RNA sequence: GGGAACGACUCGAGUAGAGUCGAAAACUUGGGUUAGGUUCGUCAGCAGGACUUAGCGGUAGUUUCCAAUUGGGCACACACCGCCUUAUGAGGAGAACCUUGUUACUUGUGGCGACUUACUGCGCGGUAUAGAGAGCCUGUUCGCAGGCUCUCUAUAAAAAGAAACAACAACAACAAC
Reactivity to DMS in 0.01 (KOAc 150mM, MgCl2 10mM, bicine 150mM(pH8.5), 24C), signal-to-noise 3, nucleotides 027 to 126: c030u030u000g000g020g000u020u010a020g030g000u000u000c030g010u000c060a110g020c030a090g000g020a040c090u000u010a060g000c050g010g020u010a050g030u000u010u010c010c020a110a190u060u050g020g000g040c080a080c140a110c170a060c150c050g000c000c070u000u030a060u000g030a300g000g000a060g000a040a100c030c030u000u000g010u000u010a060c130u020u010g030u000g000g000c010g000a040c050u010u010a070c050u000g000c030g020c070g010g000
Reactivity to 2A3 in 0.01 (KOAc 150mM, MgCl2 10mM, bicine 150mM(pH8.5), 24C), signal-to-noise 2, nucleotides 027 to 126: c000u060u060g100g020g000u070u070a000g070g020u120u090c000g030u050c040a060g000c020a010g100g000a090c010u070u060a050g070c080g020g000u080a060g010u000u040u060c020c000a020a050u120u130g020g000g000c000a020c040a000c000a020c060c140g030c010c000u240u210a050u010g040a040g020g000a030g000a050a020c000c000u050u100g050u130u060a160c050u040u070g010u030g070g000c000g010a020c000u000u030a010c040u050g080c060g000c010g080g030
Structure probing data (DMS and 2A3) for a 177-nucleotide construct. The 2A3 profile rests on 830 reads. High 2A3 reactivity points to a flexible backbone, as in loops and unpaired stretches. Reactivities are given for positions 27 through 126. Source: RMDB library OK1LIB, as collected in RNAgym. DMS adducts were read by reverse transcription with MarathonRT. For 2A3 the reverse transcriptase was SuperScript II with manganese. The reactions ran in a buffer of 150 mM KOAc, 10 mM MgCl2 and 150 mM bicine (pH 8.5), at 24 C.